[RMDB]
RNA sequence: GGGAACGACUCGAGUAGAGUCGAAAAGAAAGAAAGAAAUUAGCUCGCCAGUUAGCGAGGUCUGUCCCCACACGACAGAUAAUCGGGUGCAACUCCCGCCCCUUUUCCGAGGGUCAUCGGAACCAAGAAAACUCAGGCAACUUCGGUUGCCUGAGAAGGUAGCAAAGUUGUUCGCAACUUUGCUACCAAAAGAAACAACAACAACAAC
Reactivity to 2A3 in 0.01 (KOAc 150mM, MgCl2 10mM, bicine 150mM(pH8.5), 24C), signal-to-noise 1, nucleotides 027 to 156: g070a020a070a000g060a050a120a000g090a050a140a070u130u090a100g060c010u000c000g030c010c040a170g100u140u120a020g000c000g000a000g000g010u000c020u000g010u020c000c040c000c000a020c000a000c040g020a000c020a000g000a000u060a070a050u130c000g000g000g000u000g000c010a000a000c020u020c020c000c000g000c000c000c010c010u080u170u050u000c000c000g020a020g000g000g010u080c080a000u000c000g000g010a000a000c020c030a090a020g050a060a070a010a010c000u000c000a000g030g000c000a000a000c000u020u060c110g090g000u000u000g000c000c000u000g000a000g000a000a000